This 177-nucleotide RNA was probed chemically with 2A3 and DMS. 2A3 adducts were read by reverse transcription with SuperScript II with manganese.

RNA sequence: GGGAACGACUCGAGUAGAGUCGAAAAGCAGAACCGGAUUGGCCUCUGCGAACACUUGACACACGGAUAGUCCUGUCUUGUGGAUUAGGACGUUCUACCUCCGGUUGGGCCGGUAGUUCGUCCGAAAGGCAAGCAGGUGGUUCGCCACUUGCUUGCCAAAAGAAACAACAACAACAAC
Reactivity to 2A3 in 0.01 (KOAc 150mM, MgCl2 10mM, bicine 150mM(pH8.5), 24C), signal-to-noise 4, nucleotides 027 to 126: g000c010a010g000a020a010c010c010g070g120a160u050u160g070g020c040c040u040c010u000g020c010g010a100a020c030a000c020u050u060g020a000c000a000c000a040c040g050g050a040u060a080g060u160c000c000u000g000u020c000u000u040g000u020g020g000a050u040u070a060g000g010a000c000g000u000u010c000u000a000c000c000u000c010c000g230g000u040u070g040g030g000c070c040g010g000u000a000g000u010u000c010g000u000c000c000g000a020a000a000
Reactivity to DMS in 0.01 (KOAc 150mM, MgCl2 10mM, bicine 150mM(pH8.5), 24C), signal-to-noise 4, nucleotides 027 to 126: g020c000a000g020a180a220c030c010g000g020a130u030u050g000g000c080c090u010c010u010g020c020g010a150a110c070a040c020u010u000g000a050c020a060c240a060c090g020g010a120u030a110g010u010c040c050u010g000u000c060u020u010g010u000g000g000a150u020u020a090g000g010a010c010g000u000u000c000u000a000c010c000u050c030c000g010g000u030u050g000g000g040c080c200g000g000u000a000g000u000u000c000g000u000c000c000g000a040a050a070
Source: RMDB library OK1LIB, as collected in RNAgym. The reactions ran in a buffer of 150 mM KOAc, 10 mM MgCl2 and 150 mM bicine (pH 8.5), at 24 C.